The record gives the reactivity of an RNA of 207 nucleotides to DMS and 2A3. Conditions: 150 mM KOAc, 10 mM MgCl2 and 150 mM bicine (pH 8.5), 24 C. For 2A3, 2,061 sequencing reads were counted. It was measured as part of the RMDB library M2RFPK. For DMS, 3,725 sequencing reads were counted.

RNA sequence: GGGAACGACUCGAGUAGAGUCGAAAAUCCACUAUGAAUCUAGUCACUAAAUAAACACAAUUAGCUACUGUGUGUAAUAGUGAGUGUUGAUAACUCAAAAUAAUAGUAUAGUUUUGGAAGAUUAUACGCGCCCUUGCUCCGUUCGCGGAGCAAGGAACAUAGAGAUUGACUUCGGUCAAUCUCUAUGAAAAGAAACAACAACAACAAC
Reactivity to DMS in 0.01 (KOAc 150mM, MgCl2 10mM, bicine 150mM(pH8.5), 24C), signal-to-noise 2, nucleotides 027 to 156: u000c030c000a160c090u020a100u000g010a180a100u000c060u000a120g010u000c010a030c010u010a010a030a060u010a190a200a010c000a030c010a010a050u000u000a240g010c200u000a100c070u000g040u010g000u000g020u010a090a300u000a000g010u010g020a120g010u000g010u000u010g010a090u000a050a090c040u020c050a050a030a120a130u000a050a300u000a040g000u000a050u000a020g000u000u000u000u030g020g010a150a180g000a050u000u010a030u000a000c000g000c060g000c060c000c010u000u010g000c000u000c000c010g030u010u020c300g020c020g030g010a000g000c000a030a000g000g020a000a040
Reactivity to 2A3 in 0.01 (KOAc 150mM, MgCl2 10mM, bicine 150mM(pH8.5), 24C), signal-to-noise 4, nucleotides 027 to 156: u000c020c010a050c060u180a170u210g150a110a070u050c060u060a030g100u000c010a010c010u010a040a040a030u080a050a050a010c030a010c020a040a060u140u100a070g040c050u130a070c050u030g010u000g010u000g010u020a010a040u000a030g000u000g000a020g010u050g060u060u100g030a060u050a110a040c010u030c130a070a100a050a040u220a150a070u050a150g020u020a020u010a040g010u000u000u100u210g120g060a090a050g010a050u050u020a010u010a040c070g030c010g060c050c000c000u000u000g000c000u000c010c000g040u050u070c190g010c010g090g000a000g000c000a000a000g000g000a000a010